[RMDB]
RNA sequence: GGGAACGACUCGAGUAGAGUCGAAAAAGUGACCUUACGAGGUCACAACCGUCGGUUGGCACUUUUCGUCCUUUCUGGCCAUUUGUGAGUCCCGAAGGAGAAGGACGUCAGGGACUCAACGACGGAAGUGUCCAGGAAUCUUCGGAUUCCUGGACACAAAAGAAACAACAACAACAAC
Reactivity to 2A3 in 0.01 (KOAc 150mM, MgCl2 10mM, bicine 150mM(pH8.5), 24C), signal-to-noise 3, nucleotides 027 to 126: a010g000u000g010a000c000c000u010u030a030c250g130a020g000g000u000c000a000c020a020a050c000c000g000u000c000g020g030u000u000g000g030c030a070c240u100u100u170u130c080g090u070c020c000u060u190u220c110u120g100g000c010c010a000u000u040u010g000u010g000a040g000u010c040c010c010g030a080a040g110g130a080g020a090a190g080g010a000c040g010u050c010a020g000g000g000a000c000u000c000a000a000c010g000a000c020g000g000a020a010

The record gives the reactivity of an RNA of 177 nucleotides to 2A3.
Values cover nucleotides 27 to 126.
High 2A3 reactivity points to a flexible backbone, as in loops and unpaired stretches.
The data come from the RNA Mapping Database (RMDB), library RFM100.
The RNA was probed in 150 mM KOAc, 10 mM MgCl2 and 150 mM bicine (pH 8.5) at 24 C.